[RMDB]
RNA sequence: GGGAACGACUCGAGUAGAGUCGAAAACAGCUCCUUUUUUACCGACCAUUUGUUCUUACACAUGUGUAUGCCUGAUGACAAACAGGACCAGGAGAGAGGGAUGGAUAACUCAUUCAAUGUCCAUUCAGUGUAGUGCUAGGUUCGCCUAGCACUACACAAAAGAAACAACAACAACAAC
Reactivity to 2A3 in 0.01 (KOAc 150mM, MgCl2 10mM, bicine 150mM(pH8.5), 24C), signal-to-noise 2, nucleotides 027 to 126: c050a010g000c010u020c000c000u030u080u030u100u050u120a080c010c030g060a020c010c010a050u060u030u030g030u010u080c080u110u200a050c030a000c000a060u070g080u020g000u110a040u120g060c010c010u070g040a110u080g070a050c070a050a110a000c010a030g000g030a040c040c000a010g090g000a060g000a000g020a110g090g020g030a010u010g000g010a020u060a090a050c020u040c070a100u160u100c040a080a100u080g010u020c000c000a010u050u030c060a040
Reactivity to DMS in 0.01 (KOAc 150mM, MgCl2 10mM, bicine 150mM(pH8.5), 24C), signal-to-noise 2, nucleotides 027 to 126: c100a110g000c020u000c010c000u010u000u010u000u020u000a100c090c060g010a080c050c020a110u000u000u000g020u000u000c110u010u040a050c070a060c030a020u000g000u000g040u030a060u000g040c040c040u010g000a050u010g020a090c130a080a080a110c060a030g000g010a080c090c090a030g010g000a020g010a140g000a040g000g000g000a020u000g020g000a030u000a000a090c150u000c070a100u000u020c150a030a110u000g020u000c000c020a010u000u000c070a180
Record summary
Chemical mapping of a 177-nucleotide RNA with 2A3 and DMS. The DMS profile rests on 1,288 reads. As a SHAPE reagent, 2A3 marks flexible, mostly unpaired nucleotides at the ribose 2'-OH. Source: RMDB library OK2TST, as collected in RNAgym. Reactivities are given for positions 27 through 126. The RNA was probed in 150 mM KOAc, 10 mM MgCl2 and 150 mM bicine (pH 8.5) at 24 C.